[RMDB]
RNA sequence: GGGAACGACUCGAGUAGAGUCGAAAAGAUAUGGAUACAGACAUGCUUUGAGUUCGGAAACGAACUACAAGCAACAGCUGUGAUCCUAAGUCAAAUCCACUGGGCUACUUCGGUAGCCCAGUGGAAACUACACGAUAAUGUUCGCAUUAUCGUGUAGAAAAGAAACAACAACAACAAC
Reactivity to 2A3 in 0.01 (KOAc 150mM, MgCl2 10mM, bicine 150mM(pH8.5), 24C), signal-to-noise 3, nucleotides 027 to 126: g030a020u060a010u200g010g000a010u010a010c000a020g130a050c060a120u120g010c020u120u190u300g020a000g010u000u000c010g030g000a040a050a030c020g000a000a010c000u060a140c000a020a000g030c020a030a020c030a050g030c010u020g020u120g120a040u010c000c000u030a130a010g040u020c030a020a020a130u020c010c010a000c000u000g000g000g030c020u020a010c030u110u180c300g080g000u020a000g000c050c010c000a000g000u000g020g010a000a000a000
Reactivity to DMS in 0.01 (KOAc 150mM, MgCl2 10mM, bicine 150mM(pH8.5), 24C), signal-to-noise 5, nucleotides 027 to 126: g010a050u000a300u000g010g000a020u000a010c000a010g000a070c090a260u000g010c000u000u010u000g010a020g010u010u010c000g000g000a080a070a230c000g000a010a000c000u000a050c070a010a010g010c000a020a080c300a110g000c010u000g010u000g010a010u000c000c000u000a050a140g010u000c040a060a100a160u000c000c010a010c010u010g000g000g010c000u000a010c020u000u010c230g030g000u000a000g020c020c000c000a000g000u000g000g000a000a000a100
Annotation:
The record gives the reactivity of an RNA of 177 nucleotides to 2A3 and DMS. 2A3 adducts were read by reverse transcription with SuperScript II with manganese. The reactions ran in a buffer of 150 mM KOAc, 10 mM MgCl2 and 150 mM bicine (pH 8.5), at 24 C. Reactivities are rounded to 0.1 and cut off at 0 and 3. The DMS profile rests on 5,777 reads.